[RMDB]
RNA sequence: GGGAACGACUCGAGUAGAGUCGAAAACAUCAUCCCUUCGGGGAUGAUGAAAGAUCGAAAGAUCAGGGUUACCGUAAUAAGCCAAAAUACGAGCGAAACGCAAAAGACCUGUGUUCGCACAGGUCAAGUGCUUAAUAAAGUUCGCUUUAUUAAGCACAAAAGAAACAACAACAACAAC
Reactivity to 2A3 in 0.01 (KOAc 150mM, MgCl2 10mM, bicine 150mM(pH8.5), 24C), signal-to-noise 9, nucleotides 027 to 126: c000a000u000c000a000u000c000c000c000u000u040c200g040g010g000g000a000u000g000a000u000g000a010a010a000g010a010u020c020g020a060a030a030g010a010u020c020a030g080g020g000u050u070a060c020c020g020u020a050a080u110a180a040g060c030c040a080a080a040a090u140a050c060g020a040g040c040g080a180a100a020c090g010c080a080a110a030a040g000a000c000c000u000g000u000g030u050u050c200g010c070a000c000a000g000g000u000c000a000a000
Reactivity to DMS in 0.01 (KOAc 150mM, MgCl2 10mM, bicine 150mM(pH8.5), 24C), signal-to-noise 9, nucleotides 027 to 126: c010a000u000c000a000u000c000c000c000u000u010c170g040g010g010g010a000u000g010a000u000g000a050a080a090g000a020u000c000g000a130a090a170g000a010u000c000a140g000g000g000u000u000a100c070c010g010u000a040a070u000a090a120g010c040c060a050a060a070a090u000a040c100g000a130g010c060g000a050a050a060c110g000c120a070a050a110a080g000a010c000c000u000g010u000g000u000u000c190g020c010a010c000a010g000g000u000c000a010a040
Source information
The data come from the RNA Mapping Database (RMDB), library M2PK50. Chemical mapping of a 177-nucleotide RNA with 2A3 and DMS. The 2A3 profile rests on 24,874 reads.